[RMDB]
RNA sequence: GGGAACGACUCGAGUAGAGUCGAAAAGGAGCUCGGCAAGGUCUUAAUCGUAGGUAGAGCUUGCGUUCGCUCUACCUUACCACCGGAGCGAACUGUAGGGUCGGUGGUAUCGUGACUCUACAGUUAGGGCACGAUACGAUAUUCCUCUAACCGAGCAACCUUUUAGGUGAUUCGUCACCUAAAAGGUAAAAGAAACAACAACAACAAC
Reactivity to DMS in 0.01 (KOAc 150mM, MgCl2 10mM, bicine 150mM(pH8.5), 24C), signal-to-noise 3, nucleotides 027 to 156: g000g000a190g000c000u000c010g020g020c030a080a080g010g000u000c040u000u010a050a080u000c060g030u010a010g030g040u010a010g010a030g020c010u000u000g030c090g030u000u000c270g010c000u000c010u000a010c000c010u010u000a030c070c040a060c020c010g010g010a130g000c030g000a070a120c060u000g050u000a100g000g010g000u000c010g020g000u020g040g000u000a020u010c020g040u000g020a090c000u000c010u000a070c070a140g010u010u000a020g020g000g000c020a050c010g000a040u000a050c010g000a080u000a200u000u000c000c020u000c070u000a090a070c020c000g010a060g000c030a090
Reactivity to 2A3 in 0.01 (KOAc 150mM, MgCl2 10mM, bicine 150mM(pH8.5), 24C), signal-to-noise 5, nucleotides 027 to 156: g120g030a080g000c010u010c010g010g010c060a050a030g020g010u010c020u070u160a060a020u020c010g020u020a000g000g000u000a010g000a000g000c010u020u100g120c090g130u110u130c030g010c000u000c000u000a000c000c000u000u020a020c010c000a020c000c020g020g010a070g060c020g020a040a050c050u110g060u190a090g000g040g010u020c010g020g040u080g070g040u080a070u060c030g010u030g100a170c000u000c000u010a020c040a060g020u110u050a000g000g030g000c000a000c010g010a020u010a060c000g000a020u010a020u090u030c010c020u020c050u040a050a040c000c000g000a000g000c010a000

This 207-nucleotide RNA was probed chemically with DMS and 2A3. It was measured as part of the RMDB library OK3TST. Reactivities are given for positions 27 through 156. The RNA was probed in 150 mM KOAc, 10 mM MgCl2 and 150 mM bicine (pH 8.5) at 24 C.